[RMDB]
RNA sequence: GGGAACGACUCGAGUAGAGUCGAAAAGAUAUGGAGCUCUUGUCAGCUCCCGUAAAUGGUAAGUUAUAUCGGAAACGAUAUAUCAGUACCAUUUACGAGCGAGCUUGGAUUUAGAGCUCCUAAGUCAGUCAUACAGAGAGUUCGCUCUCUGUAUGACAAAAGAAACAACAACAACAAC
Reactivity to 2A3 in 0.01 (KOAc 150mM, MgCl2 10mM, bicine 150mM(pH8.5), 24C), signal-to-noise 3, nucleotides 027 to 126: g050a010u090a060u200g000g000a000g000c000u020c000u010u030g020u020c020a000g010c000u010c000c000c000g010u010a010a010a000u020g050g000u030a040a050g020u050u010a010u000a000u010c020g030g000a130a040a060c010g000a010u000a020u010a000u000c040a110g200u020a020c000c000a000u000u000u000a010c010g030a030g010c130g000a000g000c000u300u300g250g010a090u300u300u280a030g000a000g000c000u000c000c000u020a010a000g010u010c020a020
Reactivity to DMS in 0.01 (KOAc 150mM, MgCl2 10mM, bicine 150mM(pH8.5), 24C), signal-to-noise 2, nucleotides 027 to 126: g000a080u010a300u010g050g000a010g020c000u000c000u000u000g010u010c020a020g010c010u000c000c010c010g000u000a000a010a010u000g000g030u000a080a070g000u000u000a000u000a000u000c000g020g000a210a110a260c010g010a020u000a010u000a000u000c010a140g010u000a030c010c000a010u000u010u000a010c000g000a040g010c170g020a030g010c000u000u000g020g010a030u000u020u000a030g030a010g000c010u000c000c000u000a020a060g010u000c020a170